[RMDB]
RNA sequence: GGGAACGACUCGAGUAGAGUCGAAAACAGGAUCAGCAAAUUAAAGAUCAUUUCAUCGAUCCAGCGAUCAAGGCUUAUAAACAAUUAGGUGAUAGUACCGGUUUGUUUGCCACCAAACCAUUAACUGCAUGUACGAAACAUUCGUGUUUCGUACAUGAAAAGAAACAACAACAACAAC
Reactivity to DMS in 0.01 (KOAc 150mM, MgCl2 10mM, bicine 150mM(pH8.5), 24C), signal-to-noise 5, nucleotides 027 to 126: c160a100g020g010a020u000c010a070g040c050a110a100a100u010u020a060a100a160g000a040u020c040a100u000u000u010c210a110u020c170g010a030u010c020c060a160g020c070g010a050u000c040a120a080g010g020c020u000u000a050u010a020a010a020c030a030a080u010u010a100g020g010u000g010a140u000a110g020u010a030c020c010g000g000u000u010u000g000u000u000u010g000c020c010a140c140c100a040a060a090c050c040a080u010u010a040a100c140u000g010
Reactivity to 2A3 in 0.01 (KOAc 150mM, MgCl2 10mM, bicine 150mM(pH8.5), 24C), signal-to-noise 6, nucleotides 027 to 126: c030a030g120g000a010u030c020a050g040c060a090a080a130u140u160a160a140a050g050a040u030c030a020u080u250u140c080a120u130c070g010a010u000c020c030a010g030c010g040a010u030c050a080a070g020g000c010u090u060a070u060a110a030a020c060a090a180u200u120a110g040g040u040g060a210u120a190g040u070a030c010c000g010g010u000u000u020g020u010u030u030g040c000c000a010c000c040a060a020a020c020c030a070u150u160a070a050c050u120g010